Description
Chemical mapping of a 207-nucleotide RNA with 2A3. Source: RMDB library OK3TST, as collected in RNAgym. For 2A3, 488 sequencing reads were counted.

RNA sequence: GGGAACGACUCGAGUAGAGUCGAAAACAGAUUUCGAGAGGAAUUUGGUAUAUCAAAAGGUAUAAGACGCUCCAAGUAGAGAUGGGUCGAACUAAGACGGAGCGCAGGAUGGUUGAGUUAUACGGGAGUAUUCCAGCCAUGCUGGACCAUCGUACAAGUGAUUAAUCGCAUUCGUGCGAUUAAUCACAAAAGAAACAACAACAACAAC
Reactivity to 2A3 in 0.01 (KOAc 150mM, MgCl2 10mM, bicine 150mM(pH8.5), 24C), signal-to-noise 1, nucleotides 027 to 156: c010a010g010a070u010u010u020c030g020a020g000a030g030g070a020a060u080u050u050g040g000u100a100u000a010u090c070a170a130a060a020g100g000u120a090u020a180a030g160a010c000g000c000u000c040c030a000a080g090u030a020g100a000g000a120u010g000g010g070u000c010g000a020a090c110u120a130a000g030a000c000g000g010a040g010c010g000c000a000g050g000a010u010g000g010u000u050g060a190g130u210u090a010u000a020c040g020g000g010a100g060u010a000u080u010c000c000a000g000c010c030a040u190g110c000u010g000g020a030c000c000a000u020c000g000u000a010c020a100a080
Background:
The RNA was probed in 150 mM KOAc, 10 mM MgCl2 and 150 mM bicine (pH 8.5) at 24 C.